Annotation: An RNA of 177 nucleotides, treated with DMS and 2A3 and read out base by base.

[RMDB]
RNA sequence: GGGAACGACUCGAGUAGAGUCGAAAAGCCGAGUUGGCUGGCUCGGAAGGGGGACAGAGUUGACCAUGACAGCGAGUGUGGCCAAGGUGACAGCUGCACGCCCGGAGCCAAGCGCGGCGUGGGCUGAGGGACUGUGCAAAUUCGUUUGCACAGUCCCAAAAGAAACAACAACAACAAC
Reactivity to DMS in 0.01 (KOAc 150mM, MgCl2 10mM, bicine 150mM(pH8.5), 24C), signal-to-noise 1, nucleotides 027 to 126: g080c010c010g000a040g010u040u090g010g020c020u000g000g000c000u010c030g010g000a020a130g010g020g010g000g000a220c030a110g020a100g000u000u000g020a290c030c080a130u000g000a090c120a090g000c030g010a070g000u000g000u000g010g000c030c020a070a070g000g030u030g000a150c000a050g000c050u010g050c060a050c020g000c040c000c000g000g010a150g030c060c100a040a040g000c030g000c200g000g020c000g010u000g010g000g000c000u000g000a090
Reactivity to 2A3 in 0.01 (KOAc 150mM, MgCl2 10mM, bicine 150mM(pH8.5), 24C), signal-to-noise 2, nucleotides 027 to 126: g060c000c000g040a010g140u070u110g000g030c020u000g000g010c010u020c010g110g040a150a150g120g000g000g000g020a010c010a020g220a050g060u130u210g040a080c040c000a060u040g080a110c070a040g060c070g050a140g010u150g050u060g030g000c010c000a010a040g010g060u100g030a020c000a000g040c010u300g030c000a000c000g000c000c000c000g110g030a070g020c000c080a140a020g040c030g040c140g000g000c000g020u030g000g000g000c000u000g000a100
For 2A3, 880 sequencing reads were counted. For DMS, 1,642 sequencing reads were counted. The data come from the RNA Mapping Database (RMDB), library RFM100. For DMS the reverse transcriptase was MarathonRT. 2A3 adducts were read by reverse transcription with SuperScript II with manganese. The reactions ran in a buffer of 150 mM KOAc, 10 mM MgCl2 and 150 mM bicine (pH 8.5), at 24 C.